The record gives the reactivity of an RNA of 177 nucleotides to 2A3 and DMS. Reactivities are given for positions 27 through 126. The data come from the RNA Mapping Database (RMDB), library OK2TST. The RNA was probed in 150 mM KOAc, 10 mM MgCl2 and 150 mM bicine (pH 8.5) at 24 C. 2A3 adducts were read by reverse transcription with SuperScript II with manganese. For DMS, 900 sequencing reads were counted.

RNA sequence: GGGAACGACUCGAGUAGAGUCGAAAAUUAUCUUGCGCUUUACAGGCCCUGCCGCACGCUUUUGCGCCAAAAGCUCAAACGCAACCUGUGGCUCAAUCGACUCAGGCGUGUACUGCUUUGGAAGCGUAAUCACGACUGGUUUCGACCAGUCGUGAUUAAAAGAAACAACAACAACAAC
Reactivity to 2A3 in 0.01 (KOAc 150mM, MgCl2 10mM, bicine 150mM(pH8.5), 24C), signal-to-noise 1, nucleotides 027 to 126: u130u010a130u110c100u030u130g040c080g000c000u050u040u090a160c030a000g050g000c000c010c100u110g110c110c020g000c010a010c050g000c000u000u130u030u080g000c010g000c010c000a010a130a030a030g000c000u060c080a150a110a040c110g000c030a040a150c050c060u140g030u070g050g000c000u020c010a060a050u070c020g140a140c020u040c070a010g090g000c010g030u030g000u110a090c020u080g050c000u090u190u090g080g000a030a000g000c000g000u020
Reactivity to DMS in 0.01 (KOAc 150mM, MgCl2 10mM, bicine 150mM(pH8.5), 24C), signal-to-noise 1, nucleotides 027 to 126: u010u010a060u000c060u000u000g010c030g020c010u000u000u000a110c100a020g030g000c040c150c140u000g000c030c110g010c110a090c160g000c010u000u000u010u000g010c160g010c030c030a050a080a120a150g020c000u000c050a050a050a190c110g030c070a080a130c120c060u000g030u000g010g020c000u000c020a030a090u000c040g020a040c040u000c070a050g010g000c030g020u000g020u010a100c130u000g000c020u000u000u000g000g010a060a010g040c020g030u000